This 177-nucleotide RNA was probed chemically with 2A3 and DMS. For 2A3, 1,239 sequencing reads were counted. Conditions: 150 mM KOAc, 10 mM MgCl2 and 150 mM bicine (pH 8.5), 24 C. 2A3 adducts were read by reverse transcription with SuperScript II with manganese. It was measured as part of the RMDB library OK2TRN.
RNA sequence: GGGAACGACUCGAGUAGAGUCGAAAACAUCCACUGCUACGGCAGUGGAUGAACGAGGUAGGUACGCCUACCUCGAAAGUGGGAUGUUUGCAUAAACAUUAAACGUCCAUGGUACGCCAUGGACGAAAGUAAAUCCAGCAUUCGUGCUGGAUUUACUAAAAGAAACAACAACAACAAC
Reactivity to 2A3 in 0.01 (KOAc 150mM, MgCl2 10mM, bicine 150mM(pH8.5), 24C), signal-to-noise 1, nucleotides 027 to 126: c000a000u020c000c000a040c010u000g010c000u020a080c200g130g000c000a010g000u000g010g000a000u000g000a000a000c000g000a000g000g010u000a000g000g020u060a030c150g050c050c000u020a000c000c000u020c000g000a010a000a000g160u200g010g110g000a010u030g050u070u050u130g150c150a150u220a240a040a010c000a020u070u130a180a260a020c020g000u000c000c000a000u010g000g000u030a050c290g000c020c020a000u000g050g000a000c000g010a020a000
Reactivity to DMS in 0.01 (KOAc 150mM, MgCl2 10mM, bicine 150mM(pH8.5), 24C), signal-to-noise 2, nucleotides 027 to 126: c030a020u000c000c000a000c000u000g010c030u000a100c190g040g060c000a010g040u000g000g010a010u000g010a020a040c030g010a010g000g000u000a000g000g000u010a040c300g030c000c000u000a000c010c000u000c000g000a020a020a040g000u000g000g010g000a040u000g000u000u000u010g000c220a090u030a030a010a010c040a020u000u000a040a090a240c030g010u000c010c000a000u000g000g010u000a100c270g080c020c000a010u000g000g000a030c000g000a010a010